An RNA of 207 nucleotides, treated with 2A3 and read out base by base.
The 2A3 profile rests on 876 reads.
The data come from the RNA Mapping Database (RMDB), library M2RFPK.
RNA sequence: GGGAACGACUCGAGUAGAGUCGAAAAAACAAACAUCAAAUCGCAUAGCAAUGAGUCAAAAAAAUAGAGAGCUUUGCGAGACCUACCAAGGGUGAAGAGAUACCAUCCAAGGAGCUGAAGAGAAAUCGAGAGCUCACGGCGUUCGCGCCGUGAGCAACUACGAUUAACUGUUCGCAGUUAAUCGUAGAAAAGAAACAACAACAACAAC
Reactivity to 2A3 in 0.01 (KOAc 150mM, MgCl2 10mM, bicine 150mM(pH8.5), 24C), signal-to-noise 2, nucleotides 027 to 156: a000a020c140a040a060a020c050a070u120c050a060a040a070u030c000g000c000a010u020a020g000c020a030a200u150g040a070g120u130c110a140a140a090a070a010a060a100u300a120g100a020g000a000g030c000u010u040u020g000c000g000a000g020a000c000c000u030a070c040c040a010a030g010g000g020u010g020a000a030g070a010g020a050u040a130c060c010a030u010c000c000a000a010g010g000a000g020c090u160g050a090a020g040a020g040a050a060a050u050c100g020a040g000a010g140c010u010c010a000c000g010g030c000g090u100u100c180g030c000g000c060c040g000u020g030a000g000c010a000a000